[RMDB]
RNA sequence: GGGAACGACUCGAGUAGAGUCGAAAAUGAAGCAAAUCCAUAAUUGCCAAUGAUGAGCAAUUCGCUAUUGCCGCCUAAAAACGGGUAGCCGGGGCUGCUAGAGCCUUGUUACCAAAGAUAGCCGGCGUUACGGCAUGAUGGUUCGCCAUCAUGCCAAACAUCAAUAACGGUUCGCCGUUAUUGAUGUAAAAGAAACAACAACAACAAC
Reactivity to 2A3 in 0.01 (KOAc 150mM, MgCl2 10mM, bicine 150mM(pH8.5), 24C), signal-to-noise 5, nucleotides 027 to 156: u110g030a060a040g040c050a080a070a040u080c040c010a050u100a130a020u060u010g000c000c010a130a120u290g110a150u080g010a120g030c010a010a020u070u050c050g000c090u120a050u100u210g020c000c000g020c010c010u060a080a060a010a010a020c040g010g000g000u010a010g010c060c060g020g010g020g000c020u040g060c100u190a080g050a010g270c000c000u000u000g000u000u010a000c000c000a020a080a000g050a050u020a010g030c030c000g010g010c000g040u060u090a040c080g000g000c000a000u010g000a000u000g010g040u040u070c190g040c050c000a000u000c000a010u000g030c000c000a000a010
Reactivity to DMS in 0.01 (KOAc 150mM, MgCl2 10mM, bicine 150mM(pH8.5), 24C), signal-to-noise 2, nucleotides 027 to 156: u010g000a180a140g020c030a080a080a160u010c040c030a120u010a050a040u010u000g000c010c000a120a190u020g000a150u010g000a160g010c010a030a060u000u010c100g050c030u020a100u000u000g030c010c020g100c050c010u000a040a040a050a140a040c170g030g010g020u000a030g020c000c070g000g010g050g000c010u000g010c080u020a110g010a090g000c010c000u000u000g060u000u000a050c020c000a030a110a130g010a250u000a020g010c040c060g000g000c030g040u010u000a040c090g020g040c000a020u000g000a030u000g000g020u000u010c300g030c030c000a000u000c020a010u000g000c020c000a000a040